This 177-nucleotide RNA was probed chemically with DMS. Conditions: 150 mM KOAc, 10 mM MgCl2 and 150 mM bicine (pH 8.5), 24 C. Values are in units of 0.01, from 0 to 300, in steps of 10.

RNA sequence: GGGAACGACUCGAGUAGAGUCGAAAAGAUAUGGACCUAGUUAGGCGAUAAGAACGAAGGUAUAGCCAAGUCGGAAACGACUUGGCUAUAUGUUGACGUUCUUUUGACGCCUACUAGGUCCUAAGUCCCUGACUAUCUUCUUCGGAAGAUAGUCAGGAAAAGAAACAACAACAACAAC
Reactivity to DMS in 0.01 (KOAc 150mM, MgCl2 10mM, bicine 150mM(pH8.5), 24C), signal-to-noise 1, nucleotides 027 to 126: g030a070u000a250u000g000g000a030c000c000u000a050g000u000u000a010g020g020c000g010a170u020a020a000g040a050a000c000g010a300a100g020g030u000a000u000a000g010c000c000a000a010g000u000c000g000g010a100a030a230c000g000a030c000u000u000g010g000c010u000a000u000a000u000g000u020u000g020a300c020g000u000u000c000u040u000u010u000g010a230c000g000c000c020u000a020c000u020a020g000g000u000c000c000u020a020a050g000u000c030